[RMDB]
RNA sequence: GGGAACGACUCGAGUAGAGUCGAAAAUAUCGACUUAUGCAAUCCACGGGUUACAGAUGGGCUCGGAGUCCGAUAGGCAGAAGGCUCGUGACAACUGGGACAUCGCGCUUCCCGGUGCCGCAGCUUAGGUAAGUUAAGUCUUCGGACUUAACUUACCAAAAGAAACAACAACAACAAC
Reactivity to DMS in 0.01 (KOAc 150mM, MgCl2 10mM, bicine 150mM(pH8.5), 24C), signal-to-noise 3, nucleotides 027 to 126: u070a080u010c030g000a040c050u010u050a120u040g000c070a090a050u010c040c090a140c110g040g000g010u020u010a080c060a150g000a080u030g010g000g010c030u030c020g020g030a120g010u000c020c020g000a080u010a070g000g000c100a030g000a100a110g000g010c020u000c100g010u020g000a100c060a010a090c000u000g000g010g010a030c080a040u010c080g020c210g000c110u020u010c050c010c000g020g000u000g000c060c020g000c110a030g010c060u000u010a170
Reactivity to 2A3 in 0.01 (KOAc 150mM, MgCl2 10mM, bicine 150mM(pH8.5), 24C), signal-to-noise 6, nucleotides 027 to 126: u210a030u040c020g020a010c030u050u100a070u230g060c090a050a090u060c030c040a020c070g040g020g020u070u040a100c060a120g090a130u130g050g040g050c020u030c000g040g020a030g010u000c000c040g070a110u080a090g050g000c050a040g040a190a010g110g000c000u030c030g060u090g040a060c050a140a060c070u020g000g000g030a010c020a080u160c150g000c020g000c130u030u020c020c000c000g010g010u030g000c000c000g060c060a020g000c020u060u090a030
The data come from the RNA Mapping Database (RMDB), library OK1LIB.
An RNA of 177 nucleotides, treated with DMS and 2A3 and read out base by base.
In probing experiments dimethyl sulfate is read out at A N1 and C N3, which are open when not base-paired.
For DMS the reverse transcriptase was MarathonRT.